[RMDB]
RNA sequence: GGGAACGACUCGAGUAGAGUCGAAAAGUAUAUUGCCAUGUUGAAGGUUUGAAGGUAUACUUCAAAGUAUAUCAUGUAACUAGAGAACAAAGUAGGUUUCUGCUUAAGCUGGACCCUAAAUGAGAUUAAAAGCAUAAUUUUCUGCCUCACCAUAGCAACUGAUGUCCAAUUUCGAUUGGACAUCAGUAAAAGAAACAACAACAACAAC
Reactivity to 2A3 in 0.01 (KOAc 150mM, MgCl2 10mM, bicine 150mM(pH8.5), 24C), signal-to-noise 4, nucleotides 027 to 156: g090u040a060u030a050u150u130g010c020c020a030u030g030u020u020g070a160a060g030g010u210u190u130g050a030a020g020g000u010a010u020a010c000u080u200c180a230a130a000g000u000a000u000a000u010c020a010u070g020u040a030a040c050u030a040g010a020g030a150a040c030a040a070a030g090u050a030g030g000u020u040u010c020u040g030c010u140u130a070a020g010c010u020g000g010a030c010c000c000u050a090a100a070u110g020a120g010a050u060u110a050a080a030a010g000c020a010u060a110a140u160u110u040u030c020u010g010c020c000u000c000a020c020c020a020u030a010g060c010a020
Reactivity to DMS in 0.01 (KOAc 150mM, MgCl2 10mM, bicine 150mM(pH8.5), 24C), signal-to-noise 2, nucleotides 027 to 156: g030u000a080u000a060u000u000g020c020c030a040u030g010u010u000g020a220a140g010g000u000u000u010g040a180a110g030g010u000a010u000a030c010u010u030c270a070a120a190g010u000a030u000a020u000c000a070u000g020u000a010a040c100u000a110g000a130g010a110a210c030a040a030a070g010u000a090g020g000u000u010u010c020u000g000c020u000u000a090a070g020c010u000g000g010a140c060c010c040u000a030a070a140u000g030a110g020a300u000u000a080a080a030a240g000c070a070u020a080a070u000u000u000u000c030u000g000c000c000u000c030a020c040c010a020u000a070g000c010a110